[RMDB]
RNA sequence: GGGAACGACUCGAGUAGAGUCGAAAACGUCCGUAGUAGCAAGCUGCUGGAGGGUAUCUCGGUCAGCAUCUCGAUUGGCAAGACGUCCACUCCGGGUACGCGCCGCUCAUGCGAUGACGCCUUCAUCGGACACCUCUGCUUUCGAGCAGAGGUGUCCAAAAGAAACAACAACAACAAC
Reactivity to 2A3 in 0.01 (KOAc 150mM, MgCl2 10mM, bicine 150mM(pH8.5), 24C), signal-to-noise 2, nucleotides 027 to 126: c000g000u000c000c040g020u050a010g000u000a000g090c030a030a000g000c030u110g000c040u000g000g020a020g020g080g020u090a000u030c020u020c050g070g000u000c020a000g020c040a080u010c050u030c150g300a300u000u010g010g000c010a030a010g020a030c140g030u100c010c010a150c000u000c000c000g000g000g010u040a020c070g030c000g050c080c020g000c050u020c000a000u050g050c000g090a090u030g000a010c020g060c000c030u000u090c020a210u060c010
Structure probing data (2A3) for a 177-nucleotide construct.
For 2A3, 614 sequencing reads were counted.
The reactions ran in a buffer of 150 mM KOAc, 10 mM MgCl2 and 150 mM bicine (pH 8.5), at 24 C.
It was measured as part of the RMDB library RFM100.